[RMDB]
RNA sequence: GGGAACGACUCGAGUAGAGUCGAAAAAUGAGUUAAAAUUUAACUCUCAGUAAAUUUUAACUCAUGAGUGAAUCUGCGAGUUAAAUUUUAACUCAGGGUGACGUGGACGAAUCUCGGACGUCUAUUUUAUGAACUAGCAAUUCGUUGCUAGUUCAUAAAAAGAAACAACAACAACAAC
Reactivity to DMS in 0.01 (KOAc 150mM, MgCl2 10mM, bicine 150mM(pH8.5), 24C), signal-to-noise 1, nucleotides 027 to 126: a030u000g000a020g000u000u030a000a030a000a000u000u000u000a020a000c000u000c020u000c020a010g000u000a090a100a160u000u070u020u010a050a120c060u040c120a130u030g000a090g010u000g010a150a080u010c000u000g000c120g000a020g000u010u010a000a000a030u000u000u000u000a010a000c030u010c000a000g020g000g040u030g000a020c050g000u000g020g010a030c030g000a130a060u000c060u010c030g010g000a150c090g000u000c000u020a070u010u000u000
Reactivity to 2A3 in 0.01 (KOAc 150mM, MgCl2 10mM, bicine 150mM(pH8.5), 24C), signal-to-noise 2, nucleotides 027 to 126: a030u020g000a000g010u000u000a010a000a000a000u010u000u000a000a000c010u000c010u000c000a010g030u100a040a050a220u120u140u030u140a030a040c000u040c040a050u070g040a010g080u050g010a000a050u030c000u000g010c010g000a000g000u010u000a030a000a000u010u000u000u010a000a000c010u000c000a000g000g040g020u090g010a030c040g020u050g100g020a020c000g060a100a090u050c030u050c120g060g070a010c000g020u020c020u020a200u000u030u000